[RMDB]
RNA sequence: GGGAACGACUCGAGUAGAGUCGAAAACGAUAUGCAUGUAUCACUAAUAGACUAUGUAUGCGUAAAUAUUCUUAUGCACGUAGUCUGUAGUAGUGUCGAGAGAUUGACACUACAGCGACGUGCAUAAGGUAGUUCUGGAUUUCGAUCUAGAACUACCAAAAGAAACAACAACAACAAC
Reactivity to DMS in 0.01 (KOAc 150mM, MgCl2 10mM, bicine 150mM(pH8.5), 24C), signal-to-noise 9, nucleotides 027 to 126: c070g000a150u020a010u000g000c000a010u000g010u010a090u020c060a110c120u020a170a080u030a030g000a020c030u010a010u000g010u030a060u010g010c010g000u000a010a040a100u030a110u040u030c130u000u000a000u000g010c000a030c010g000u000a010g000u010c010u000g000u020a160g010u000a010g010u010g000u000c000g010a030g000a190g010a170u000u000g000a010c000a000c000u000a000c000a070g020c100g000a020c010g020u000g000c000a000u000a020a060
Reactivity to 2A3 in 0.01 (KOAc 150mM, MgCl2 10mM, bicine 150mM(pH8.5), 24C), signal-to-noise 9, nucleotides 027 to 126: c030g030a120u030a010u090g010c010a010u010g040u120a120u090c030a020c100u080a060a190u090a170g040a030c040u040a010u040g060u030a060u040g030c010g020u030a010a090a030u300a130u160u100c060u020u010a000u010g000c000a000c010g020u030a040g060u050c020u010g000u000a020g000u000a010g020u000g000u020c010g010a010g000a010g020a180u020u080g000a000c000a000c000u000a000c000a010g020c020g030a010c000g000u000g000c000a000u010a010a010
Source: RMDB library OK1LIB, as collected in RNAgym. The record gives the reactivity of an RNA of 177 nucleotides to DMS and 2A3. For DMS, 77,624 sequencing reads were counted.